[RMDB]
RNA sequence: GGGAACGACUCGAGUAGAGUCGAAAAGACACACGUGCAUGCGUAUGCCUUAUAUAAAUAACUAAACACAUAUUUAUUUAUUUGUGGGUUUAUAUGUACGUGCAUAUUUGCAUGAUGCCAAUGUCACACGGUCCGUGCAUUUCGAUGCACGGACCGUAAAAGAAACAACAACAACAAC
Reactivity to 2A3 in 0.01 (KOAc 150mM, MgCl2 10mM, bicine 150mM(pH8.5), 24C), signal-to-noise 1, nucleotides 027 to 126: g000a020c040a000c000a020c000g080u080g090c010a020u030g000c000g000u000a000u000g000c000c000u070u000a050u040a000u000a000a140a000u180a020a020c050u140a000a300a000c020a000c010a080u060a050u070u040u210a120u060u210u110a080u000u080u000g020u010g000g020g000u000u110u070a130u000a000u010g110u040a000c060g000u000g020c000a010u030a000u080u100u070g000c000a000u000g100a160u030g020c000c060a250a110u040g010u010c000a070c000